Conditions: 150 mM KOAc, 10 mM MgCl2 and 150 mM bicine (pH 8.5), 24 C. Structure probing data (DMS) for a 177-nucleotide construct.

RNA sequence: GGGAACGACUCGAGUAGAGUCGAAAACAACCUUAUCAUCCACGCUGACAUGAUGAUAAAGAACCGAGAGCAUAUCAAGAUAGUCUUGGUGCUGGGCGACGACAAUUUGAUGGUGGUGGAUACAGUGAGACUGCUUUGUUUUCGAACAAAGCAGUCUAAAAGAAACAACAACAACAAC
Reactivity to DMS in 0.01 (KOAc 150mM, MgCl2 10mM, bicine 150mM(pH8.5), 24C), signal-to-noise 2, nucleotides 027 to 126: c170a070a220c070c020u040u000a040u000c030a050u000c020c020a060c180g020c050u010g010a150c130a080u000g020a060u010g000a110u000a010a030a130g000a150a100c090c020g020a100g000a070g020c070a030u000a110u010c040a010a050g000a200u020a060g000u000c010u000u000g000g010u000g000c000u000g020g060g050c080g000a110c110g000a050c060a050a090u000u000u010g030a070u010g000g030u000g000g010u000g000g020a110u000a090c120a050g000u000g030